This 207-nucleotide RNA was probed chemically with DMS and 2A3.
Values cover nucleotides 27 to 156.
For 2A3 the reverse transcriptase was SuperScript II with manganese.
For DMS the reverse transcriptase was MarathonRT.
It was measured as part of the RMDB library RNAMAK.
For 2A3, 1,994 sequencing reads were counted.
The RNA was probed in 150 mM KOAc, 10 mM MgCl2 and 150 mM bicine (pH 8.5) at 24 C.

RNA sequence: GGGAACGACUCGAGUAGAGUCGAAAAGAGAUAAGUUCGCUUAUCUCAAAAGCGUACUACCAGGAGGAUAUAAACACAACAGCCUUUCCCAAAUAGGAAAGGACAUGUGUGUAUCUCCCCACCCUGGUAUCGCAAAAUGCUAGUCUUCGGACUAGCACGGUGCAAAUAGGUUCGCCUAUUUGCACCGAAAAGAAACAACAACAACAAC
Reactivity to DMS in 0.01 (KOAc 150mM, MgCl2 10mM, bicine 150mM(pH8.5), 24C), signal-to-noise 2, nucleotides 027 to 156: g000a030g010a070u000a000a000g040u000u000c290g050c040u030u000a000u010c000u000c020a100a040a070a130g030c020g030u000a090c110u000a030c000c010a040g000g020a260g010g010a040u010a010u000a040a010a030c000a010c040a010a100c130a180g080c010c000u010u000u000c000c000c000a010a210a230u020a040g000g010a030a020a010g050g010a000c090a170u000g020u040g000u000g010u000a020u010c060u010c020c000c000c030a170c300c010c010u010g010g020u010a000u030c000g000c030a000a050a070a140u000g030c000u030a010g030u000c000u000u000c300g020g000a000c000u020a000g000c000a010
Reactivity to 2A3 in 0.01 (KOAc 150mM, MgCl2 10mM, bicine 150mM(pH8.5), 24C), signal-to-noise 3, nucleotides 027 to 156: g010a000g000a010u010a000a010g020u080u130c210g090c120u000u000a000u010c010u000c000a040a050a000a050g020c010g040u110a080c030u000a000c000c000a000g000g000a010g000g020a040u020a000u020a050a140a000c000a000c000a010a130c030a100g040c000c000u020u010u040c020c010c030a220a300a200u300a060g000g010a000a000a000g010g030a000c110a210u050g000u000g000u000g000u020a030u040c070u030c010c000c010c020a120c020c010c000u000g010g000u000a000u130c000g000c010a000a000a000a160u050g000c010u000a000g000u000c000u040u040c210g060g000a000c000u000a000g000c000a000